[RMDB]
RNA sequence: GGGAACGACUCGAGUAGAGUCGAAAAGUCGUAAUGUUCGCAUUACGACAAAAACCGUAGGUUAGCUUGGACCUGGAGUAUUUUAUUUCGAAAGAGAUGGGAUACUAUGAAGGCUAGCUAACCUAAACGGAAAAACAGGAACUUUCGAGUUCCUGAACAACAUAGUUAACUUCGGUUAACUAUGUUGAAAAGAAACAACAACAACAAC
Reactivity to 2A3 in 0.01 (KOAc 150mM, MgCl2 10mM, bicine 150mM(pH8.5), 24C), signal-to-noise 6, nucleotides 027 to 156: g010u000c000g000u000a010a000u010g030u060u080c190g000c120a000u000u000a000c000g000a000c000a000a050a000a000a030c010c000g010u020a010g000g000u000u000a000g000c010u040u080g110g060a260c000c000u020g010g040a010g000u010a000u000u010u000u010a010u000u020u010c030g030a120a080a060g000a030g000a000u010g010g010g000a010u000a010c000u020a070u280g190a110a000g020g000c010u010a000g000c000u000a000a000c000c000u000a010a010a000c010g000g040a090a070a030a000a010c000a010g020g010a000a000c000u060u100u300c300g020a050g010u000u000c000c000u000g010a010a010
Reactivity to DMS in 0.01 (KOAc 150mM, MgCl2 10mM, bicine 150mM(pH8.5), 24C), signal-to-noise 3, nucleotides 027 to 156: g000u000c000g030u010a010a010u000g020u010u000c300g030c020a020u000u000a010c010g010a010c010a020a030a050a050a150c000c020g030u000a030g000g000u000u000a010g010c000u000u000g080g010a170c020c010u000g030g000a040g020u000a000u000u000u000u010a040u010u020u000c000g020a210a130a270g000a030g010a020u000g000g010g000a020u000a020c000u000a060u000g010a080a020g030g000c020u000a030g020c000u000a010a010c010c000u000a000a000a040c020g000g020a060a050a090a110a140c020a020g010g010a010a010c000u000u000u000c230g010a110g030u000u000c000c000u000g000a050a110

An RNA of 207 nucleotides, treated with 2A3 and DMS and read out base by base. It was measured as part of the RMDB library RNAMAK. DMS (dimethyl sulfate) methylates the pairing face of unpaired adenines and cytosines. Values cover nucleotides 27 to 156. The RNA was probed in 150 mM KOAc, 10 mM MgCl2 and 150 mM bicine (pH 8.5) at 24 C. The 2A3 profile rests on 10,024 reads.